[RMDB]
Overview
An RNA of 177 nucleotides, treated with DMS and read out base by base. The RNA was probed in 150 mM KOAc, 10 mM MgCl2 and 150 mM bicine (pH 8.5) at 24 C.
RNA sequence: GGGAACGACUCGAGUAGAGUCGAAAAGAUAUGGACAAUGCCGAUAAGCUCCGCGCAUCGUUUGACGAAGCUCGGAAACGAGCUUCCGAGAUGCGAACUACGGAACUUAUCGGCAUUGUCCUAAGUCCUACGGUUAUAGGUUCGCCUAUAACCGUAGAAAAGAAACAACAACAACAAC
Reactivity to DMS in 0.01 (KOAc 150mM, MgCl2 10mM, bicine 150mM(pH8.5), 24C), signal-to-noise 6, nucleotides 027 to 126: g000a120u010a300u010g010g010a030c000a010a010u000g010c010c000g000a010u000a010a010g020c010u000c000c000g000c020g000c020a010u000c000g000u000u010u020g020a280c300g000a020a020g010c000u000c000g010g020a090a100a190c020g000a020g010c010u000u000c000c020g000a090g010a010u000g000c000g010a060a070c180u020a300c010g000g000a020a010c000u000u000a000u000c000g000g000c000a000u000u000g000u000c000c000u000a010a080g000u000c030